[RMDB]
RNA sequence: GGGAACGACUCGAGUAGAGUCGAAAAACGCGCAUACGUGCGCGACACUUGUUACAUCCAAUGAUGAGAGUUUGCGACUAGGGCGGUCUUACACAAUCAUGGUGAUUCUAGUCAUUCUGAUGGUAAACGAUUAUGUCGGUUUCGACCGACAUAAUCGAAAAGAAACAACAACAACAAC
Reactivity to DMS in 0.01 (KOAc 150mM, MgCl2 10mM, bicine 150mM(pH8.5), 24C), signal-to-noise 3, nucleotides 027 to 126: a130c030g010c000g000c010a040u020a080c240g060u000g040c010g030c010g000a050c090a040c040u000u000g010u000u010a100c090a060u020c070c200a100a080u020g000a030u000g030a050g000a040g000u000u020u010g000c030g000a070c010u000a130g010g000g010c060g010g000u010c030u000u000a060c090a040c070a050a050u040c020a070u020g010g010u000g000a040u000u010c140u010a100g010u010c010a020u000u020c060u000g010a020u000g020g030u010a050a080a160
Reactivity to 2A3 in 0.01 (KOAc 150mM, MgCl2 10mM, bicine 150mM(pH8.5), 24C), signal-to-noise 5, nucleotides 027 to 126: a000c010g030c010g000c010a020u020a070c190g100u050g040c000g010c000g010a000c020a020c020u050u100g060u100u070a070c020a070u050c050c040a130a060u150g000a040u040g000a020g010a010g050u020u140u280g070c040g010a030c010u060a060g040g080g010c040g050g020u000c020u030u100a040c080a010c010a070a100u080c050a040u110g040g010u010g010a040u120u040c050u140a050g030u000c030a000u160u050c030u050g040a050u030g010g030u080a030a080a080